[RMDB]
RNA sequence: GGGAACGACUCGAGUAGAGUCGAAAAGAGUAAUAUAUUCCAAUCCCAACUUUUGUCCAGUUGGGCGGCGGAAGAACGUUCUCUUUGAGGGCAUUGAAACGGUAUGGAUGCGGGAUAGCAAAGCAGCCUCAUACGAAAACUUCGGUUUUCGUAUGAGAAAAGAAACAACAACAACAAC
Reactivity to 2A3 in 0.01 (KOAc 150mM, MgCl2 10mM, bicine 150mM(pH8.5), 24C), signal-to-noise 5, nucleotides 027 to 126: g030a010g050u220a040a080u050a030u030a070u140u000c000c000a010a040u000c000c000c000a010a000c000u100u110u160u200g120u040c050c040a020g000u010u000g000g010g000c030g140g020c010g020g000a020a010g010a030a010c030g040u030u000c020u000c000u000u010u040g070a050g020g000g010c070a050u030u140g090a100a070a040c050g020g040u100a060u090g030g020a030u070g000c030g000g000g020a070u070a050g030c060a110a080a030g030c010a020g020c010
Reactivity to DMS in 0.01 (KOAc 150mM, MgCl2 10mM, bicine 150mM(pH8.5), 24C), signal-to-noise 5, nucleotides 027 to 126: g010a050g000u030a010a030u010a090u030a150u010u000c000c000a090a300u000c000c000c000a010a000c020u000u010u020u050g000u030c260c280a030g000u010u000g000g000g000c120g000g000c300g010g000a010a010g010a080a150c210g000u000u000c010u000c000u000u000u000g010a130g020g000g000c040a060u020u000g000a070a100a110c110g000g000u000a040u020g000g000a080u010g000c100g000g050g000a050u010a050g000c120a060a070a110g000c070a100g010c120
This 177-nucleotide RNA was probed chemically with 2A3 and DMS. The data come from the RNA Mapping Database (RMDB), libraries RFM100 and RFMREP. Values are in units of 0.01, from 0 to 300, in steps of 10. Values cover nucleotides 27 to 126.